[RMDB]
RNA sequence: GGGAACGACUCGAGUAGAGUCGAAAAGUUGUUCGCCUAUUAAAGGGGAUCGUGAGCUGGGUUUAGACCGUCGUGAGACAGGUCGGUUGCUAUCUAACGGGGGUGUCAGGGCGGCUGAGGGGAAGGAUCUGUAUCCAAAUUUCGAUUUGGAUACAGAAAAAGAAACAACAACAACAAC
Reactivity to DMS in 0.01 (KOAc 150mM, MgCl2 10mM, bicine 150mM(pH8.5), 24C), signal-to-noise 7, nucleotides 027 to 126: g020u000u000g010u010u000c040g020c010c010u010a130u010u030a060a100a120g010g000g010g010a050u010c070g020u000g010a080g020c070u010g010g010g000u000u010u020a100g010a020c000c010g010u000c010g000u060g010a210g000a030c030a080g030g010u000c010g010g010u010u010g000c080u010a070u010c070u020a080a070c060g000g000g000g000g010u020g000u020c140a090g000g000g010c100g000g000c100u020g000a130g000g000g000g000a090a050g000g000a100
Reactivity to 2A3 in 0.01 (KOAc 150mM, MgCl2 10mM, bicine 150mM(pH8.5), 24C), signal-to-noise 9, nucleotides 027 to 126: g020u020u010g010u030u030c020g050c020c000u090a130u160u250a150a110a040g040g010g010g020a060u050c040g030u050g070a030g020c040u050g010g070g010u050u100u150a030g000a010c000c010g020u020c020g020u050g060a080g000a040c090a130g020g000u010c010g000g020u070u050g030c020u050a100u130c030u030a050a040c040g030g000g000g000g020u090g130u140c060a030g010g040g030c080g030g000c090u080g020a090g010g000g000g000a010a030g030g010a040
Conditions: 150 mM KOAc, 10 mM MgCl2 and 150 mM bicine (pH 8.5), 24 C. The record gives the reactivity of an RNA of 177 nucleotides to DMS and 2A3. DMS adducts were read by reverse transcription with MarathonRT. As a SHAPE reagent, 2A3 marks flexible, mostly unpaired nucleotides at the ribose 2'-OH. Values cover nucleotides 27 to 126. 2A3 adducts were read by reverse transcription with SuperScript II with manganese.